[RMDB]
The record gives the reactivity of an RNA of 177 nucleotides to 2A3 and DMS. For 2A3 the reverse transcriptase was SuperScript II with manganese.

RNA sequence: GGGAACGACUCGAGUAGAGUCGAAAAUCAGCCGUGUGAUAUUUAGUUUUAAGGGACGAACUGCAGAAAGGAAGCCGGUGACAAUUCUAUUGAGCCGUUCGAUUUCCUCCUCUACCACAUGGAGGUGCAGGCCGUAUACUUUCGAGUAUACGGCCUGAAAAGAAACAACAACAACAAC
Reactivity to 2A3 in 0.01 (KOAc 150mM, MgCl2 10mM, bicine 150mM(pH8.5), 24C), signal-to-noise 2, nucleotides 027 to 126: u100c000a000g030c040c040g040u060g000u020g030a050u000a100u190u210u060a050g070u020u120u010u090a050a050g020g000g030a000c000g070a030a000c010u020g020c000a020g040a130a160a000g060g020a000a010g000c100c000g000g010u100g050a030c000a060a060u210u070c000u070a080u130u140g000a000g020c000c000g030u040u030c020g100a150u030u080u080c000c010u000c010c010u030c020u140a130c030c050a010c000a050u120g000g010a000g030g000u020g000
Reactivity to DMS in 0.01 (KOAc 150mM, MgCl2 10mM, bicine 150mM(pH8.5), 24C), signal-to-noise 1, nucleotides 027 to 126: u050c050a140g010c010c050g000u050g020u000g000a060u050a060u030u010u000a030g000u000u030u010u030a020a060g020g010g000a010c000g000a080a040c020u000g000c040a100g000a060a080a080g010g000a100a130g000c090c090g060g030u000g020a190c040a100a070u010u010c010u020a070u000u000g020a140g010c020c020g000u000u000c010g000a120u000u000u010c000c000u000c080c000u000c090u000a100c100c040a040c060a040u000g000g000a000g010g050u030g030

Values cover nucleotides 27 to 126.